An RNA of 177 nucleotides, treated with DMS and 2A3 and read out base by base.
In probing experiments dimethyl sulfate is read out at A N1 and C N3, which are open when not base-paired.
Values cover nucleotides 27 to 126.
The DMS profile rests on 12,242 reads.
For 2A3 the reverse transcriptase was SuperScript II with manganese.
RNA sequence: GGGAACGACUCGAGUAGAGUCGAAAAGAAGACGUGACGAAAAGUCACGAAAAGAGCUGCGAGGUACCCGCAGCAAAGAAAAGGUACCAAGACGGAAACGUCAGACAUCGGAGACGAUGUCAAAAGAACCAUUUAUUAAUUUCGAUUAAUAAAUGGUAAAAGAAACAACAACAACAAC
Reactivity to DMS in 0.01 (KOAc 150mM, MgCl2 10mM, bicine 150mM(pH8.5), 24C), signal-to-noise 5, nucleotides 027 to 126: g020a200a170g000a190c030g030u000g010a020c000g000a090a060a130a190g010u000c000a000c000g000a060a050a110a140g010a160g000c000u000g010c010g000a140g000g000u000a000c000c000c000g000c010a010g010c010a030a050a150g000a060a000a030a120g000g000u010a000c000c000a140a060g000a000c000g000g000a100a110a120c010g020u000c010a150g000a000c000a000u000c000g000g000a180g000a190c000g000a010u000g000u010c000a060a030a140a090g000a120
Reactivity to 2A3 in 0.01 (KOAc 150mM, MgCl2 10mM, bicine 150mM(pH8.5), 24C), signal-to-noise 8, nucleotides 027 to 126: g170a060a020g110a030c010g000u000g000a010c010g070a110a090a040a090g000u000c000a000c000g030a010a030a000a000g120a030g000c000u000g000c000g050a100g030g000u000a000c000c000c000g000c000a000g000c070a010a030a000g080a010a040a000a020g000g000u000a000c000c000a000a020g010a000c000g010g030a070a100a000c010g010u010c010a000g000a000c000a000u000c000g040g010a070g030a090c010g000a000u000g000u000c010a020a030a000a020g040a010